[RMDB]
RNA sequence: GGGAACGACUCGAGUAGAGUCGAAAAUUCAUUUAAAUGAAUUGAAACAAAUUUAAUACAAGUGGAUGUAGGAUAACCGUCCGUCCUUUACAUUGGUAUAAAAGUGAUCUAAAAUUCUAUUGAUAAUUGCGCUCUCGCGUGUUCGCACGCGAGAGAAGUUACGCAUCAGUUUCGACUGAUGCGUAACAAAAGAAACAACAACAACAAC
Reactivity to 2A3 in 0.01 (KOAc 150mM, MgCl2 10mM, bicine 150mM(pH8.5), 24C), signal-to-noise 1, nucleotides 027 to 156: u000u000c000a000u000u100u250a220a270a090u020g000a000a000u040u110g030a060a000a040c040a010a210a070u190u250u230a030a030u100a080c000a060a030g010u090g040g010a030u150g050u160a020g010g010a000u000a140a060c050c020g010u000c040c040g130u040c010c000u050u050u000a080c050a000u040u130g020g000u040a020u090a100a100a040a020g040u050g060a080u080c000u090a030a110a110a000u150u020c080u190a120u050u000g020a080u050a290a010u030u250g030c110g040c010u000c000u010c010g010c000g010u000g000u030u040c050g070c090a000c040g000c030g000a000g000a000g000a000a000

Annotation: Conditions: 150 mM KOAc, 10 mM MgCl2 and 150 mM bicine (pH 8.5), 24 C. An RNA of 207 nucleotides, treated with 2A3 and read out base by base. The 2A3 profile rests on 623 reads. It was measured as part of the RMDB library M2RFPK.